[RMDB]
RNA sequence: GGGAACGACUCGAGUAGAGUCGAAAACUCUUCCGGAGCCUUCUUUCGAGGUCUUCCGCGUCUUUUCUUGCUUGGAUCCAUUUCUCGAGGACGUCCUCCCUUCCUCCCCUCCGGGUCCUCUUCGUCUGCCACAGCCGCUUCGGCGGCUGUAAAAGAAACAACAACAACAAC
Reactivity to DMS in 0.01 (KOAc 150mM, MgCl2 10mM, bicine 150mM(pH8.5), 24C), signal-to-noise 3, nucleotides 027 to 129: c070u010c100u020u070c000c000g000g000a050g040c180c030u050u030c070u030u090u020c180g000a020g070g030u000c050u000u000c020c000g030c240g070u070c080u000u020u000u020c000u010u040g020c070u050u010g010g000a150u040c050c070a110u020u030u020c030u010c000g010a110g040g010a070c120g020u000c000c000u030c010c010c000u030u000c040c040u030c060c010c000c040u020c030c020g020g030g030u030c050c030u000c030u000u010c050g040u010c020u020g070c130c090
Reactivity to 2A3 in 0.01 (KOAc 150mM, MgCl2 10mM, bicine 150mM(pH8.5), 24C), signal-to-noise 3, nucleotides 027 to 129: c000u000c000u210u020c030c010g010g000a000g040c000c010u040u030c020u120u290u240c100g020a030g060g000u080c050u070u000c010c020g000c050g080u100c000u000u120u020u010c010u060u050g100c010u020u050g110g020a030u160c020c020a110u110u090u010c030u020c030g030a030g050g010a070c000g040u020c010c000u020c000c020c030u060u010c010c010u050c000c000c000c000u010c000c000g000g060g000u000c010c010u020c000u000u020c000g140u020c000u010g000c000c000